[RMDB]
RNA sequence: GGGAACGACUCGAGUAGAGUCGAAAAGAAAUAAGACACUCACCUAUACUCGACUUCACGAGUGAAGGAAAUAGAGGUGAUAGUGUCGAAAAAGUGAUCGAUGCGUCACGCGCAAAACGAAAGAAAAGGGAUUGCUUAACUUCGGUUAAGCAGUCCCAAAAGAAACAACAACAACAAC
Reactivity to 2A3 in 0.01 (KOAc 150mM, MgCl2 10mM, bicine 150mM(pH8.5), 24C), signal-to-noise 9, nucleotides 027 to 126: g060a000a110a020u190a050a020g000a010c000a000c000u010c000a000c000c000u020a020u040a060c040u030c050g090a060c070u140u110c120a040c130g060a030g060u030g020a030a020g100g110a010a070a050u210a040g080a020g000g000u010g010a020u080a120g000u000g000u000c000g010a010a020a000a000a000g100u080g020a020u030c060g080a070u120g030c090g050u040c060a020c100g020c000g000c020a030a050a060a040c050g110a090a100a060g120a020a100a030a040
Reactivity to DMS in 0.01 (KOAc 150mM, MgCl2 10mM, bicine 150mM(pH8.5), 24C), signal-to-noise 7, nucleotides 027 to 126: g010a090a070a070u010a080a100g010a020c000a000c000u010c010a010c010c000u000a070u000a140c150u010c240g010a300c020u010u000c020a030c150g020a150g020u000g010a030a000g000g020a090a100a090u000a020g000a020g000g000u000g000a080u040a020g010u000g020u000c000g000a040a070a070a090a080g000u010g000a060u000c030g000a100u020g000c050g000u010c130a060c110g000c060g010c080a030a050a080a080c090g010a050a100a090g000a030a050a070a090